This 177-nucleotide RNA was probed chemically with 2A3 and DMS.
DMS adducts were read by reverse transcription with MarathonRT.
The RNA was probed in 150 mM KOAc, 10 mM MgCl2 and 150 mM bicine (pH 8.5) at 24 C.
For DMS, 1,377 sequencing reads were counted.
[RMDB]
RNA sequence: GGGAACGACUCGAGUAGAGUCGAAAAAGUUGGCAACUGUCGCGAGGUGGCGAUGAGUGGGCUAGGUCUAUCAAUGGGCUGGAUUUACAUAUUCCGUUUCGUAGACUGGAAAAUGCGAAUGAAAACAACCCAUCACUCCUUUCGAGGAGUGAUGGGUAAAAGAAACAACAACAACAAC
Reactivity to 2A3 in 0.01 (KOAc 150mM, MgCl2 10mM, bicine 150mM(pH8.5), 24C), signal-to-noise 1, nucleotides 027 to 126: a000g010u010u070g000g000c000a000a000c000u000g000u020c030g080c080g050a050g000g120u040g000g080c000g020a090u010g000a000g100u050g000g000g000c000u020a020g000g010u000c000u060a300u140c050a170a000u190g000g020g020c000u000g130g020a110u080u070u040a050c010a000u300a090u050u000c060c040g090u000u020u000c040g000u000a000g000a120c000u100g070g000a060a010a010a010u060g000c010g040a000a050u020g000a010a010a010a010c040a040
Reactivity to DMS in 0.01 (KOAc 150mM, MgCl2 10mM, bicine 150mM(pH8.5), 24C), signal-to-noise 1, nucleotides 027 to 126: a010g010u000u000g000g040c110a100a030c120u010g000u000c010g010c030g010a110g000g050u010g080g000c150g030a110u030g000a100g050u000g000g040g000c070u020a050g000g010u010c040u000a180u000c140a070a060u030g000g000g000c050u000g000g000a000u000u000u000a020c290a000u010a050u000u030c040c000g060u010u000u000c160g000u000a050g030a000c050u030g020g000a060a030a060a010u010g000c030g010a020a020u050g000a110a030a050a100c160a050